[RMDB]
RNA sequence: GGGAACGACUCGAGUAGAGUCGAAAAUCACCAGAUGCUGCAUCACCUGCUCACUGAUGGCUCAACGGUAUCCGGCGGUACAACUGAAUACUUGUAGCUGCCUUUUGAGCGGGUUGGCUGCAAUCCGAAAAGAGGACACACUUCGGUGUGUCCUCAACAGACCAUUCUAGUUCGCUAGAAUGGUCUGAAAAGAAACAACAACAACAAC
Reactivity to DMS in 0.01 (KOAc 150mM, MgCl2 10mM, bicine 150mM(pH8.5), 24C), signal-to-noise 1, nucleotides 027 to 156: u000c040a170c010c030a120g010a090u030g010c070u000g020c040a180u000c040a080c000c000u000g010c020u000c030a080c120u010g010a040u000g060g030c060u000c000a080a030c030g000g030u000a010u000c000c000g000g000c010g000g030u010a060c260a120a050c010u030g010a020a040u000a010c000u010u000g030u010a040g000c000u000g030c030c000u000u000u010u000g010a000g000c010g020g010g020u010u010g050g010c080u000g000c030a090a120u000c010c030g000a110a050a150a200g010a040g030g000a010c000a010c000a010c020u000u010c240g070g010u000g030u000g000u000c000c000u020c000a010a070
Reactivity to 2A3 in 0.01 (KOAc 150mM, MgCl2 10mM, bicine 150mM(pH8.5), 24C), signal-to-noise 4, nucleotides 027 to 156: u080c030a040c030c000a020g010a020u030g010c040u010g000c020a080u080c050a060c000c000u010g000c000u000c000a000c020u040g010a050u040g030g000c000u010c050a070a050c070g020g010u010a000u020c030c010g030g010c070g100g120u300a120c080a090a020c080u020g010a050a010u020a010c010u030u210g030u130a010g000c020u000g000c000c000u000u040u030u110g000a000g000c010g000g000g000u060u020g000g010c010u000g000c020a030a180u000c010c010g040a050a050a020a070g020a000g000g000a000c020a000c010a000c020u080u100c230g010g000u000g000u000g010u000c000c000u010c000a010a000